[RMDB]
RNA sequence: GGGAACGACUCGAGUAGAGUCGAAAACGUACGUAAAAGCAUAAUGAUUUCGUUCACAUACUUUUCCUUCUCAAUAUCAUUUUCAUAUUGAUUUGUUUGCGAGAGGUACAUACUUUAAGCAUUAUCGCAUCUCGCCGCUAUUCGUAGCGGCGAGAUGAAAAGAAACAACAACAACAAC
Reactivity to 2A3 in 0.01 (KOAc 150mM, MgCl2 10mM, bicine 150mM(pH8.5), 24C), signal-to-noise 3, nucleotides 027 to 126: c040g060u070a010c050g010u040a040a010a000a110g070c230a060u060a020a020u230g050a210u080u120u110c040g030u080u090c040a000c000a170u200a060c060u000u040u000u000c020c000u110u070c060u010c010a050a030u020a080u040c100a110u000u060u180u120c120a120u180a120u220u180g040a010u020u000u090g060u000u050u030g090c020g020a020g000a000g010g000u060a020c000a050u150a050c030u070u100u170a160a000g010c010a020u080u000a020u230c020g000

Overview:
The record gives the reactivity of an RNA of 177 nucleotides to 2A3. The reactions ran in a buffer of 150 mM KOAc, 10 mM MgCl2 and 150 mM bicine (pH 8.5), at 24 C. 2A3 adducts were read by reverse transcription with SuperScript II with manganese. Reactivities are given for positions 27 through 126. The 2A3 profile rests on 687 reads.